This 207-nucleotide RNA was probed chemically with 2A3.

RNA sequence: GGGAACGACUCGAGUAGAGUCGAAAAUAACGAAUUCUCAAAGGUAAAUAUCAGCUGGUAAUUCUGGGAGCUAUGCCUAGAUAUUUGAAACACUCGGAAUUUCAGUUGGUAUCGACUUUUUUGAAUUGAAAGUUAAGGUACUUCGGUACCUUAACAAGUGUUUACCCUAGUUCGCUAGGGUAAACACAAAAGAAACAACAACAACAAC
Reactivity to 2A3 in 0.01 (KOAc 150mM, MgCl2 10mM, bicine 150mM(pH8.5), 24C), signal-to-noise 2, nucleotides 027 to 156: u180a070a050c040g020a000a020u010u000c000u000c000a010a020a000g030g000u010a020a030a030u000a010u010c000a000g000c000u010g060g150u190a010a010u000u010c000u010g000g050g020a050g030c080u120a070u160g050c040c020u030a050g100a160u190a180u120u290u220g080a110a080a020c050a020c050u020c010g010g000a000a000u000u000u030c010a010g000u000u000g000g000u000a000u000c000g010a000c000u030u000u000u010u010u010g010a020a000u050u060g050a160a090a000g000u000u000a000a000g000g000u000a010c000u020u040c130g060g010u000a000c000c000u000u010a000a000c000a000a010
The data come from the RNA Mapping Database (RMDB), library RFM130.